[RMDB]
RNA sequence: GGGAACGACUCGAGUAGAGUCGAAAAUCCGUGCCGUUCGCGGCACGGAAAACCGAUGGUAGUGUGGGGUCUCCCCAUGCGAGACUAGGGAACUGCCAGGCAAAAGCUGUGGCUUCGGCCACAGCAAGAGAAUAAUUAGCUUCGGCUAAUUAUUCUCAAAAGAAACAACAACAACAAC
Reactivity to DMS in 0.01 (KOAc 150mM, MgCl2 10mM, bicine 150mM(pH8.5), 24C), signal-to-noise 3, nucleotides 027 to 126: u000c000c010g050u000g010c000c010g040u000u010c220g040c020g020g000c010a000c000g000g010a010a010a080a190c010c000g020a100u010g000g010u000a040g020u010g020u000g010g000g000g010u010c080u010c010c010c140c100a040u020g010c060g010a090g000a020c170u000a120g010g000g010a230a050c090u000g020c000c020a080g010g010c170a070a060a140a090g020c000u000g010u000g000g000c000u000u010c220g020g000c000c000a000c010a000g010c000a010a030
Reactivity to 2A3 in 0.01 (KOAc 150mM, MgCl2 10mM, bicine 150mM(pH8.5), 24C), signal-to-noise 2, nucleotides 027 to 126: u000c000c000g020u000g000c010c020g070u080u080c300g010c030g120g000c000a010c020g020g000a020a030a000a000c000c000g020a060u060g000g030u020a020g000u010g030u050g050g110g010g100u070c140u120c040c040c020c030a030u080g020c070g020a030g010a000c010u050a060g040g050g020a030a040c030u100g000c020c010a060g090g060c070a060a040a050a140g000c000u000g000u000g020g000c000u010u020c230g080g000c020c000a010c000a000g010c010a000a010